RNA sequence: GGGAACGACUCGAGUAGAGUCGAAAAUUGUGGCUGAUGUAGCUUAUAAUUCACAGUACUAGCAAUGACAGGGGAAAAUUUCACUAGUCAGGGGUAACAGUUAUAGGGUCACUGUGCUCAGCCCAUAAUGAUACCGUUCAUUCGUGAACGGUAUCAUAAAAGAAACAACAACAACAAC
Reactivity to 2A3 in 0.01 (KOAc 150mM, MgCl2 10mM, bicine 150mM(pH8.5), 24C), signal-to-noise 2, nucleotides 027 to 126: u070u030g050u070g010g000c010u010g000a060u110g070u070a020g030c010u070u070a060u000a030a090u070u050c030a020c000a070g030u040a020c020u030a020g120c070a060a140u080g030a040c020a070g020g020g020g030a010a110a050a100u070u150u060c030a010c020u030a040g000u030c010a030g010g060g000g020u040a070a010c010a050g000u000u000a040u030a060g030g060g020u050c040a040c050u050g010u010g060c010u020c040a020g020c000c010c000a020u140a080
Reactivity to DMS in 0.01 (KOAc 150mM, MgCl2 10mM, bicine 150mM(pH8.5), 24C), signal-to-noise 3, nucleotides 027 to 126: u000u010g030u000g010g020c010u000g030a080u000g020u000a040g010c020u000u000a030u010a070a060u000u010c110a170c180a110g020u000a080c020u010a090g010c120a140a120u000g010a050c070a130g010g000g010g000a020a080a130a150u000u000u010c050a080c030u000a080g020u000c030a080g000g010g000g010u000a070a060c140a050g000u000u000a060u000a050g000g000g000u000c140a080c100u000g000u000g000c120u000c070a070g010c010c000c020a060u020a100